[RMDB]
RNA sequence: GGGAACGACUCGAGUAGAGUCGAAAAGGGGCGAAUUGGUCUCGGAACUUAACCCUAAGUAUACCUUUGGUUCUGAAAAGUCUUGCGCUCCUAUAGUCGUUCGGACCGCCUUCUAUGCUCGCGUCUUACGAGAUAUGAAUUUCGAUUCAUAUCUCGUAAAAGAAACAACAACAACAAC
Reactivity to DMS in 0.01 (KOAc 150mM, MgCl2 10mM, bicine 150mM(pH8.5), 24C), signal-to-noise 5, nucleotides 027 to 126: g000g010g010g030c030g010a070a090u030u000g010g000u020c060u000c040g000g000a050a020c020u000u020a110a130c050c030c060u020a070a130g010u030a130u020a090c090c020u000u000u000g010g010u000u000c020u000g010a050a070a100a090g000u010c030u000u010g010c010g000c020u000c020c000u000a090u010a060g010u010c030g020u010u010c040g000g000a080c030c020g010c050c020u000u000c030u000a070u020g000c010u000c030g000c090g000u010c050u000u000
Reactivity to 2A3 in 0.01 (KOAc 150mM, MgCl2 10mM, bicine 150mM(pH8.5), 24C), signal-to-noise 9, nucleotides 027 to 126: g020g000g000g000c040g050a100a160u140u110g060g020u030c020u010c030g010g010a030a010c010u070u070a070a100c020c010c030u040a080a020g070u050a090u080a220c020c000u050u050u080g020g000u020u010c010u020g040a060a070a070a050g040u020c040u050u070g020c020g000c000u010c000c000u030a050u060a080g030u030c020g030u030u040c010g030g040a060c000c010g020c010c000u060u020c020u050a070u100g020c010u020c020g020c010g040u010c000u010u010

Conditions: 150 mM KOAc, 10 mM MgCl2 and 150 mM bicine (pH 8.5), 24 C. The record gives the reactivity of an RNA of 177 nucleotides to DMS and 2A3. 2A3 adducts were read by reverse transcription with SuperScript II with manganese. Values cover nucleotides 27 to 126. DMS adducts were read by reverse transcription with MarathonRT.